[RMDB]
RNA sequence: GGGAACGACUCGAGUAGAGUCGAAAACUUGUAACCCAUGUGGGGACAUUAAGAUGGUGGGACACUGGUUCGGUUCCUCGGAUCGGUUCUGAUGUGGGCAUGUUUCUGAGCUGCCCAGUCCAAGCUGUGAGUAAUUAGUGUUGAGUUGAGCGAAGGCACUUAAUGCUUAGUUCGCUAAGCAUUAAGUAAAAGAAACAACAACAACAAC
Reactivity to DMS in 0.01 (KOAc 150mM, MgCl2 10mM, bicine 150mM(pH8.5), 24C), signal-to-noise 2, nucleotides 027 to 156: c070u020u000g010u010a090a150c010c010c000a200u000g020u000g030g010g050g000a100c060a070u000u000a040a070g010a100u000g010g020u000g020g040g020a080c070a080c050u000g020g010u000u020c010g000g020u020u000c070c020u000c020g000g000a030u000c020g050g000u000u010c050u010g030a090u000g020u000g020g020g050c040a100u010g030u000u000u000c060u030g000a150g050c020u000g000c000c010c000a070g010u000c020c060a080a150g000c020u020g010u000g010a190g030u000a040a060u020u000a060g010u010g030u000u010g000a210g020u000u000g010a090g030c050g010a070a100g000g000c100
Reactivity to 2A3 in 0.01 (KOAc 150mM, MgCl2 10mM, bicine 150mM(pH8.5), 24C), signal-to-noise 5, nucleotides 027 to 156: c050u050u090g040u110a050a060c000c030c050a110u190g120u130g060g050g020g020a040c030a080u140u140a090a050g080a120u110g010g040u040g010g030g020a020c020a020c100u030g030g020u030u040c010g000g070u090u050c020c030u050c040g000g010a010u030c010g020g020u070u000c060u080g050a050u070g030u070g140g010g000c010a020u110g070u020u080u080c160u160g060a040g020c010u010g000c000c000c000a000g000u000c010c020a060a020g020c030u030g020u030g080a020g040u140a140a100u080u140a080g030u040g010u080u050g030a070g010u030u040g020a000g020c050g040a060a020g030g000c030